Structure probing data (DMS and 2A3) for a 177-nucleotide construct. Values cover nucleotides 27 to 126. Source: RMDB library M2PK90, as collected in RNAgym. Conditions: 150 mM KOAc, 10 mM MgCl2 and 150 mM bicine (pH 8.5), 24 C. DMS adducts were read by reverse transcription with MarathonRT.

RNA sequence: GGGAACGACUCGAGUAGAGUCGAAAAUAAAAAGAUCGAAAGAUCAAAAGGCGUUCAUGUUGUCGACCUUCACGUGGUGAGCGCUGUCAACUGACAGCUGUCAGGUUAACAGACAACAAAAAAAAAACGAAUCUAAAGGAUUCGUCCUUUAGAUUCGAAAAGAAACAACAACAACAAC
Reactivity to DMS in 0.01 (KOAc 150mM, MgCl2 10mM, bicine 150mM(pH8.5), 24C), signal-to-noise 3, nucleotides 027 to 126: u000a040a050a090a160a090g010a010u010c010g010a090a080a180g010a010u000c000a090a050a090a040g000g010c010g010u000u000c010a100u000g010u000u000g010u000c010g010a030c000c000u000u000c230a070c280g010u010g010g010u000g000a000g000c030g010c000u000g000u000c090a100a160c010u000g000a000c010a090g040c180u020g000u000c000a010g000g010u000u000a030a010c010a060g020a010c000a010a000c020a030a020a010a000a020a090a060a070a040a130
Reactivity to 2A3 in 0.01 (KOAc 150mM, MgCl2 10mM, bicine 150mM(pH8.5), 24C), signal-to-noise 2, nucleotides 027 to 126: u180a010a100a020a000a000g010a010u010c000g040a050a030a070g020a010u030c030a000a020a040a040g000g000c010g000u030u010c030a000u050g000u040u000g000u010c000g000a030c000c000u090u100c130a080c120g100u090g000g030u020g010a020g010c010g000c020u000g030u020c010a110a090c030u040g000a000c000a140g220c210u300g030u000c000a000g010g020u020u020a000a020c000a020g050a020c030a020a000c040a000a070a040a010a020a000a010a010a010a000